Source: RMDB library OK3TST, as collected in RNAgym.
The record gives the reactivity of an RNA of 207 nucleotides to 2A3.
The 2A3 profile rests on 367 reads.
For 2A3 the reverse transcriptase was SuperScript II with manganese.
[RMDB]
RNA sequence: GGGAACGACUCGAGUAGAGUCGAAAAAGAAUUGACUUAUAAAAUUAUAUGUAUUUGUCAUGUAUAACACAAUAUUUUGAAGUACAGUCCUGUGUCAUAAGGAUAUGUUCUGAGAAAUCCAUCAAUUUUGUCAUUGUAUAAACAUGAUAGAGUGUAAGUCAUACGUACUCUUCGGAGUACGUAUGACAAAAGAAACAACAACAACAAC
Reactivity to 2A3 in 0.01 (KOAc 150mM, MgCl2 10mM, bicine 150mM(pH8.5), 24C), signal-to-noise 1, nucleotides 027 to 156: a000g080a020a050u000u000g000a020c030u020u030a080u110a300a120a110a120u280u030a300u150a180u200g000u020a170u020u140u020g000u060c030a030u100g000u030a230u050a180a040c020a000c000a050a000u020a060u200u000u000u070g000a000a000g000u000a000c000a020g020u030c000c000u060g050u080g140u100c050a130u150a180a000g030g010a020u020a290u200g000u000u000c000u030g000a000g000a020a020a000u000c000c000a020u050c080a100a240u300u170u100u000g170u050c070a020u020u000g060u040a130u050a110a200a060c000a000u000g000a000u020a010g130a020g030u050g070u170a250a080
The reactions ran in a buffer of 150 mM KOAc, 10 mM MgCl2 and 150 mM bicine (pH 8.5), at 24 C.